Chemical mapping of a 177-nucleotide RNA with 2A3 and DMS. The reactions ran in a buffer of 150 mM KOAc, 10 mM MgCl2 and 150 mM bicine (pH 8.5), at 24 C. For DMS, 4,596 sequencing reads were counted. The data come from the RNA Mapping Database (RMDB), library TTRDEL.
RNA sequence: GGGAACGACUCGAGUAGAGUCGAAAAGAUAUGGAUACCUUCGAUAAGGCUCCGUCGGAAACGACGGAAGCCUUUUGACGAAGAUCCUAAGUCAAAAGUCCACACGAAGUUCGCUUCGUGUGGACAACCUAAACGAAUGGUUCGCCAUUCGUUUAGGAAAAGAAACAACAACAACAAC
Reactivity to 2A3 in 0.01 (KOAc 150mM, MgCl2 10mM, bicine 150mM(pH8.5), 24C), signal-to-noise 2, nucleotides 027 to 126: g000a010u060a030u110g000g000a030u180a300c030c000u000u000c020g050a070u020a300a030g010g000c010u000c010c000g000u000c000g030g000a090a030a040c010g000a000c000g000g000a010a030g010c010c000u010u010u010u020g020a010c020g010a000a010g000a010u000c000c000u010a080a020g030u030c030a010a060a100a190g010u000c000c000a000c000a000c000g010a010a000g010u060u130c160g180c200u000u000c000g010u010g000u000g010g000a000c000a000a000
Reactivity to DMS in 0.01 (KOAc 150mM, MgCl2 10mM, bicine 150mM(pH8.5), 24C), signal-to-noise 3, nucleotides 027 to 126: g000a030u000a210u010g000g000a020u000a100c280c010u000u000c000g010a130u010a020a010g010g020c010u000c010c010g010u000c010g000g010a050a050a080c000g000a020c000g000g000a010a020g020c000c000u000u000u000u000g000a270c070g000a020a010g000a030u000c000c000u010a030a180g000u000c010a060a080a120a120g000u000c000c000a010c000a000c000g000a000a010g020u000u010c250g010c000u000u000c000g010u000g020u000g010g010a000c000a000a030